The record gives the reactivity of an RNA of 177 nucleotides to 2A3 and DMS. DMS adducts were read by reverse transcription with MarathonRT. The RNA was probed in 150 mM KOAc, 10 mM MgCl2 and 150 mM bicine (pH 8.5) at 24 C. For DMS, 13,337 sequencing reads were counted. 2A3 is a SHAPE reagent: it acylates the 2'-hydroxyl of flexible nucleotides of all four kinds.

[RMDB]
RNA sequence: GGGAACGACUCGAGUAGAGUCGAAAAUUUAACAGCGUAGAUGUCUCUGUCACGAUACGAGUAAGUGACUCUCGUGUACUACUGACGAAUGAGACAGAGACAUUUAUGCUCAGUGUCAGUCAAGGAACCGUCUAAAUGUAUUCGUACAUUUAGACGGAAAAGAAACAACAACAACAAC
Reactivity to 2A3 in 0.01 (KOAc 150mM, MgCl2 10mM, bicine 150mM(pH8.5), 24C), signal-to-noise 6, nucleotides 027 to 126: u110u120u080a130a050c030a010g010c010g000u000a000g000a000u000g000u010c000u000c000u000g020u000c010a020c070g060a020u050a070c020g010a010g010u040a160a120g040u060g220a030c010u030c010u010c090g120u120g040u070a070c010u010a010c010u030g140a110c030g070a090a080u140g010a040g000a060c000a000g000a000g000a000c000a000u000u000u000a010u000g000c000u000c010a020g010u010g050u060c060a080g030u030c050a060a040g130g030a080a080
Reactivity to DMS in 0.01 (KOAc 150mM, MgCl2 10mM, bicine 150mM(pH8.5), 24C), signal-to-noise 8, nucleotides 027 to 126: u010u010u010a090a110c140a030g020c010g020u000a000g010a010u000g000u000c000u000c000u000g010u000c000a120c070g010a100u010a070c020g010a080g010u000a040a070g010u000g010a070c070u000c190u000c180g000u000g010u010a040c040u000a060c040u000g000a140c060g000a090a070u000g000a090g000a010c000a010g000a010g000a000c010a000u000u000u000a010u000g000c000u000c080a050g010u000g010u000c050a080g010u010c100a070a080g000g000a100a180